[RMDB]
RNA sequence: GGGAACGACUCGAGUAGAGUCGAAAACGAUCUGUUCGCAGAUCGAGCUACGGAGACGUAGCAAAGCGAGCGAGGGCACGGGCGCUCGCACUACCGGAAAUACACCCAUAUCCACGUGUGCUAGGAUAUGGCCGUGCCCAAAGAAACAGCACACGAAAUUUAUCGCGCUAUUCGUAGCGCGAUAAAUAAAAGAAACAACAACAACAAC
Reactivity to 2A3 in 0.01 (KOAc 150mM, MgCl2 10mM, bicine 150mM(pH8.5), 24C), signal-to-noise 1, nucleotides 027 to 156: c030g000a000u010c010u010g050u110u080c290g000c090a010g000a010u010c030g000a030g000c000u000a000c000g000g040a100g020a070c000g000u010a000g000c010a000a090a000g000c010g000a010g000c000g010a050g020g020g000c010a000c000g080g000g000c040g050c000u040c000g060c000a020c020u150a080c000c060g120g060a050a130a000u240a050c030a000c000c000c000a000u000a000u000c010c010a070c150g010u010g000u000g020c000u020a020g000g010a000u000a010u000g010g010c000c010g000u000g000c000c000c000a040a130a060g100a060a050a020c140a030g000c020a010c030a010c060g040a020a140